[RMDB]
RNA sequence: GGGAACGACUCGAGUAGAGUCGAAAAUGAGGCCAACAUCAAAGAUGCGUACCUAGCUGCGUUUCAACCUGCGUGGGUUGAGGCGGCUUAGCGGAUUAGGGCGUUCUGCCCCAGUGGUACCAUUACCCUAUGCAAAGUCUGCAUGCAGGCAGGGUAGGUCAACGUGACUGUUCGCAGUCACGUUGACAAAAGAAACAACAACAACAAC
Reactivity to 2A3 in 0.01 (KOAc 150mM, MgCl2 10mM, bicine 150mM(pH8.5), 24C), signal-to-noise 1, nucleotides 027 to 156: u150g070a090g000g080c030c030a060a000c030a070u190c050a050a140a000g030a080u030g020c010g000u060a210c020c000u020a030g030c000u060g100c000g010u000u000u070c040a010a000c010c000u080g190c200g230u300g030g000g110u000u000g000a010g010g010c000g150g010c030u110u060a000g010c060g080g000a050u060u200a100g050g020g000c060g100u300u000c200u300g000c000c000c000c000a050g140u060g070g050u060a200c000c000a000u000u170a000c070c000c000u000a000u010g000c020a200a000a080g060u130c070u000g000c000a020u100g040c000a060g100g000c020a040g050g000g000u050a060g170

Chemical mapping of a 207-nucleotide RNA with 2A3. 2A3 adducts were read by reverse transcription with SuperScript II with manganese.